[RMDB]
RNA sequence: GGGAACGACUCGAGUAGAGUCGAAAACAACAGCGUAAUCGCGUCUUGACGUGAUCUAGUUAGCAAUGACUGUAUGCUAACUAAAUUGUCUGUCAUAGACAAUACGCUGUUCUACAGUCAUUGAUACGAUAUUGUGGUAUUUCGAUAUUACAAUAUCAAAAGAAACAACAACAACAAC
Reactivity to 2A3 in 0.01 (KOAc 150mM, MgCl2 10mM, bicine 150mM(pH8.5), 24C), signal-to-noise 8, nucleotides 027 to 126: c020a000a000c000a000g000c000g000u000a000a010u010c000g000c000g020u010c050u080u230g140a010c000g010u010g000a000u000c010u010a000g010u000u000a000g000c010a030a080u180g010a010c000u010g000u020a000u020g000c000u000a000a000c000u000a000a040a000u010u010g000u000c000u010g160u080c030a060u130a070g000a000c000a000a000u040a010c000g000c000u000g000u000u000c000u000a000c000a000g000u000c010a080u020u300g160a130u160a160c150
Reactivity to DMS in 0.01 (KOAc 150mM, MgCl2 10mM, bicine 150mM(pH8.5), 24C), signal-to-noise 2, nucleotides 027 to 126: c080a010a000c000a000g000c000g040u010a190a020u000c000g020c020g000u000c060u050u020g000a020c010g000u000g000a000u000c300u020a010g010u000u000a010g000c020a010a270u020g010a010c010u010g020u000a020u000g010c000u000a000a000c000u000a000a300a020u000u000g000u000c010u000g020u030c270a100u040a020g000a010c000a010a010u000a010c000g000c000u000g000u000u000c300u000a000c000a000g000u000c000a300u020u010g000a300u080a200c300
Chemical mapping of a 177-nucleotide RNA with 2A3 and DMS. The RNA was probed in 150 mM KOAc, 10 mM MgCl2 and 150 mM bicine (pH 8.5) at 24 C. DMS adducts were read by reverse transcription with MarathonRT. In probing experiments dimethyl sulfate is read out at A N1 and C N3, which are open when not base-paired. For DMS, 7,054 sequencing reads were counted. Source: RMDB library OK1LIB, as collected in RNAgym.